[RMDB]
This 177-nucleotide RNA was probed chemically with 2A3 and DMS.
For DMS, 17,759 sequencing reads were counted.
For DMS the reverse transcriptase was MarathonRT.
The RNA was probed in 150 mM KOAc, 10 mM MgCl2 and 150 mM bicine (pH 8.5) at 24 C.
Values cover nucleotides 27 to 126.

RNA sequence: GGGAACGACUCGAGUAGAGUCGAAAAGCGCUCCUUGGACUGGUCUAAGGUCACCCUUGAUGGGCGCCCAUUAACUACUAUCCAGCAGUAUUCUAAGACUUUCUAUGUUUUGCCUCUACGUGGUAAGUAUACUCUCUCUAUUCGUAGAGAGAGUAUAAAAAGAAACAACAACAACAAC
Reactivity to 2A3 in 0.01 (KOAc 150mM, MgCl2 10mM, bicine 150mM(pH8.5), 24C), signal-to-noise 5, nucleotides 027 to 126: g010c040g010c020u030c010c010u020u030g010g030a030c030u050g070g010u080c040u120a150a090g090g010u030c040a040c000c020c000u040u080g120a180u150g050g030g000c010g010c000c000c000a090u140u110a070a050c030u090a020c010u070a090u110c030c020a030g000c010a010g110u060a090u130u080c050u120a110a030g040a110c010u020u170u040c060u090a090u100g060u030u070u050u050g040c010c000u030c020u040a050c070g060u030g010g020u030a050a020g060
Reactivity to DMS in 0.01 (KOAc 150mM, MgCl2 10mM, bicine 150mM(pH8.5), 24C), signal-to-noise 9, nucleotides 027 to 126: g010c070g010c050u000c020c020u000u000g010g010a080c200u000g010g000u010c070u010a080a100g020g010u000c030a050c050c020c010u000u000g010a130u000g010g010g010c030g010c040c020c020a100u000u010a060a090c070u000a060c070u000a100u010c050c040a050g010c070a060g010u000a070u000u000c060u010a070a110g000a070c040u000u000u000c050u010a070u010g010u000u000u000u000g000c050c010u000c080u000a070c090g020u000g000g010u000a030a090g010